Source information:
Source: RMDB library OK3TST, as collected in RNAgym. The record gives the reactivity of an RNA of 207 nucleotides to 2A3 and DMS.

RNA sequence: GGGAACGACUCGAGUAGAGUCGAAAAAGUUCUAGUCCUCACCUAAGAUCAGACUGACAGGGCCCUCAAAGUAAGAGCACUAGGUUGGGCUUUGUGGUGGGGAUUAGUGUCUCAUUUUUAGUCCCAAAUUAAAAACGAGAUUUUGGGCUGUACAUCAGGACUAUGAUACUUUCGAGUAUCAUAGUCCAAAAGAAACAACAACAACAAC
Reactivity to 2A3 in 0.01 (KOAc 150mM, MgCl2 10mM, bicine 150mM(pH8.5), 24C), signal-to-noise 2, nucleotides 027 to 156: a000g070u070u030c000u000a000g000u030c000c000u000c000a000c000c000u070a160a090g020a260u120c110a090g170a270c030u120g040a040c050a000g000g000g020c000c000c000u050c040a120a190a030g020u060a060a030g060a070g240c030a040c070u040a010g110g090u100u070g010g000g000c000u000u000u010g040u020g000g000u000g000g000g050g000a000u000u000a000g000u000g020u000c000u010c020a040u110u170u080u050u290a020g060u180c000c000c000a000a000a030u040u050a020a020a040a060a040c090g020a080g020a080u040u020u030u020g000g010g010c020u080g070u130a100c040a110u060c080a100
Reactivity to DMS in 0.01 (KOAc 150mM, MgCl2 10mM, bicine 150mM(pH8.5), 24C), signal-to-noise 1, nucleotides 027 to 156: a090g010u000u000c020u000a040g020u010c000c000u010c000a040c010c010u000a100a120g020a120u000c020a060g020a180c050u010g010a180c060a100g000g020g010c000c000c000u000c070a140a150a160g020u010a080a070g010a060g020c040a080c020u010a180g020g010u000u000g000g000g000c000u000u000u010g000u020g050g010u000g020g000g050g030a000u000u000a020g040u000g010u000c000u020c000a050u000u000u000u000u030a020g020u000c070c030c090a100a080a050u000u000a020a030a010a010a050c080g010a050g010a260u000u000u000u000g020g000g020c050u000g020u000a070c110a210u000c040a300

Conditions: 150 mM KOAc, 10 mM MgCl2 and 150 mM bicine (pH 8.5), 24 C. 2A3 is a SHAPE reagent: it acylates the 2'-hydroxyl of flexible nucleotides of all four kinds. Reactivities are given for positions 27 through 156.